[RMDB]
RNA sequence: GGGAACGACUCGAGUAGAGUCGAAAAGUUGCCCGAGAAGAGAUCACACAGAUGAGACACAAGGAGCGUUGUCUCAUCACUUGGUUUUCGACAAGUGACGAGUCGUUCCCAAAAUCGCUCCAAUGAAAUUCAUAUGAUGUUUCGACAUCAUAUGAAUAAAAGAAACAACAACAACAAC
Reactivity to DMS in 0.01 (KOAc 150mM, MgCl2 10mM, bicine 150mM(pH8.5), 24C), signal-to-noise 7, nucleotides 027 to 126: g010u000u010g020c180c020c020g010a090g030a140a140g010a100g000a080u000c100a100c130a100c170a100g010a010u000g000a010g000a010c000a010c180a090a080g010g000a010g010c000g020u000u000g000u000c000u000c000a010u000c010a060c080u000u010g010g000u000u000u000u000c010g010a030c000a070a130g010u010g010a110c020g000a010g000u000c000g000u000u000c000c000c010a000a010a020a030u010c010g010c000u000c000c010a120a080u020g010a070a090
Reactivity to 2A3 in 0.01 (KOAc 150mM, MgCl2 10mM, bicine 150mM(pH8.5), 24C), signal-to-noise 1, nucleotides 027 to 126: g060u070u050g150c080c020c000g030a050g040a080a020g130a000g040a070u130c030a030c000a010c040a200g000a000u000g000a000g020a000c020a010c020a050a240g000g000a000g000c000g020u000u000g000u010c000u000c010a000u000c000a000c010u000u020g040g000u010u020u000u000c000g000a000c000a070a170g100u090g250a070c020g000a010g000u000c010g000u000u000c030c000c000a000a000a000a000u010c000g010c010u000c000c000a030a010u150g030a040a040
This 177-nucleotide RNA was probed chemically with DMS and 2A3.
The RNA was probed in 150 mM KOAc, 10 mM MgCl2 and 150 mM bicine (pH 8.5) at 24 C.
2A3 is a SHAPE reagent: it acylates the 2'-hydroxyl of flexible nucleotides of all four kinds.
For 2A3, 2,508 sequencing reads were counted.
For DMS the reverse transcriptase was MarathonRT.